[RMDB]
RNA sequence: GGGAACGACUCGAGUAGAGUCGAAAACAUAGCGUUUCACAAUGUGCGCCAUUAACAUUGUUUAUGCAAGCACGUUUCGCAAUGUACGGCGCAGAAGCAUUGCCAACACAAAUACGCUUCACGAUGUAAAACAUCGGUGCGUUCGCGCACCGAUGAAGUUGCGUCACAAGUUCGCUUGUGACGCAACAAAAGAAACAACAACAACAAC
Reactivity to 2A3 in 0.01 (KOAc 150mM, MgCl2 10mM, bicine 150mM(pH8.5), 24C), signal-to-noise 2, nucleotides 027 to 156: c100a080u140a070g010c020g030u000u090u080c150a020c010a000a030u000g070u100g000c000g000c060c000a050u000u250a070a040c030a070u010u030g050u070u170u070a120u110g010c070a030a070g050c030a100c300g000u000u060u030c010g020c020a000a000u010g000u010a010c070g010g000c000g000c010a010g030a030a000g060c000a010u010u010g010c070c020a200a010c140a060c000a140a000a030u130a030c050g020c040u080u080c060a030c060g090a100u140g080u300a060a010a080a050c010a000u000c000g000g000u000g000c000g020u020u020c160g030c000g000c050a000c010c000g020a000u000g000a000a000
The data come from the RNA Mapping Database (RMDB), library M2RFPK. Structure probing data (2A3) for a 207-nucleotide construct. For 2A3 the reverse transcriptase was SuperScript II with manganese. The RNA was probed in 150 mM KOAc, 10 mM MgCl2 and 150 mM bicine (pH 8.5) at 24 C. The 2A3 profile rests on 714 reads. Reactivities are rounded to 0.1 and cut off at 0 and 3.